[RMDB]
RNA sequence: GGGAACGACUCGAGUAGAGUCGAAAAGCUCUGUAAUGGGCUGGGAUCCGAAGCCCCAUUGAGGGAUAAUACAGGCUCUCCCAUCCAACUCCUAUUCCAACACGUCCUCGUCGUACAGAGUGGUAACUAAGGUAUAGCUCCUUCGGGAGCUAUACAACUAAAGUGAUCUCUUCGGAGAUCACUUUAGAAAAGAAACAACAACAACAAC
Reactivity to DMS in 0.01 (KOAc 150mM, MgCl2 10mM, bicine 150mM(pH8.5), 24C), signal-to-noise 2, nucleotides 027 to 156: g010c010u000c020u000g000u000a110a120u000g010g000g030c030u010g010g020g010a060u000c020c020g020a120a130g020c010c020c000c030a250u000u000g020a160g020g030g000a130u000a080a120u000a130c120a160g000g010c070u000c030u000c030c010c010a080u000c060c010a110a080c040u010c020c030u000a080u000u020c030c030a030a060c040a080c080g000u000c000c050u000c060g020u000c080g020u000a060c050a060g000a030g010u000g000g000u000a050a110c050u010a110a100g030g010u000a010u000a010g000c000u000c000c000u000u000c290g070g020g010a000g020c000u000a000u000a000c000a080a140
Reactivity to 2A3 in 0.01 (KOAc 150mM, MgCl2 10mM, bicine 150mM(pH8.5), 24C), signal-to-noise 2, nucleotides 027 to 156: g010c000u000c010u040g080u080a090a100u130g070g000g010c000u000g030g010g010a070u150c020c000g010a090a020g040c000c000c020c010a120u100u250g030a210g000g030g020a050u100a080a040u090a090c070a040g000g000c010u020c000u010c030c000c000a020u030c020c000a020a040c030u060c020c010u090a100u170u060c030c020a080a030c010a070c080g070u060c000c010u050c030g090u050c000g000u000a030c010a020g060a040g030u020g020g040u070a110a070c090u050a210a040g070g010u000a000u000a000g000c000u000c000c000u010u050c250g070g000g000a000g020c000u010a000u000a010c010a010a000